The record gives the reactivity of an RNA of 177 nucleotides to DMS. It was measured as part of the RMDB library OK2TRN.
RNA sequence: GGGAACGACUCGAGUAGAGUCGAAAAGAACUGGGCGGCAAAAAGACCUCUAAUGCGGAAGCCAAUACUGGAAUUAUCCACAUUUCCCAAGGCCCAACAUUUAAUGCCCAAGUAUAUGAGGUACCAAAUUACGCUCCUAGUUCGCUAGGAGCGUAAUAAAAGAAACAACAACAACAAC
Reactivity to DMS in 0.01 (KOAc 150mM, MgCl2 10mM, bicine 150mM(pH8.5), 24C), signal-to-noise 1, nucleotides 027 to 126: g010a080a080c100u020g000g010g010c060g030g060c220a010a040a090a090a080g000a080c010c000u000c050u010a040a000u000g030c060g000g020a070a180g010c050c080a030a050u000a130c180u000g000g000a070a050u000u000a080u000c020c020a030c070a010u000u000u000c050c070c020a180a110g000g000c010c020c020a070a130c110a030u000u000u010a090a230u000g000c000c030c010a070a110g030u020a050u000a030u000g020a030g000g000u000a160c180c130a050a080